[RMDB]
RNA sequence: GGGAACGACUCGAGUAGAGUCGAAAAGCGGCGGCCGACAAAAUGAUACGCCCGCCAAAGACGCGCCAUAUUCUGUUGAGAGACGGAGGUAGGGGUAGCACUAUGUCCAUCGUGGUCUCCUCGUAAAGAUCCGAUAGGUAUUCGUACCUAUCGGAUCAAAAGAAACAACAACAACAAC
Reactivity to 2A3 in 0.01 (KOAc 150mM, MgCl2 10mM, bicine 150mM(pH8.5), 24C), signal-to-noise 2, nucleotides 027 to 126: g040c060g030g000c000g020g030c080c000g040a050c060a000a300a030a070u160g040a070u040a110c030g010c030c020c000g000c000c000a030a040a010g050a010c040g020c010g040c040c020a060u070a130u080u030c020u040g060u080u110g070a090g000a010g000a070c020g060g000a010g090g000u060a040g030g020g020g010u050a030g020c020a010c060u100a070u130g060u000c010c040a050u060c080g040u070g000g020u020c000u030c000c020u010c000g070u120a120a130a010
Reactivity to DMS in 0.01 (KOAc 150mM, MgCl2 10mM, bicine 150mM(pH8.5), 24C), signal-to-noise 3, nucleotides 027 to 126: g020c180g020g030c000g000g010c130c040g000a040c120a070a100a110a100u000g010a160u010a090c080g010c240c000c060g020c020c040a040a080a080g020a110c130g020c050g010c010c040a070u010a060u010u010c030u000g020u020u000g000a190g000a160g000a080c040g010g010a060g000g020u000a100g010g000g000g000u000a040g020c040a040c040u000a050u000g010u000c040c040a050u000c070g020u000g010g000u000c050u010c010c030u000c090g000u020a020a090a100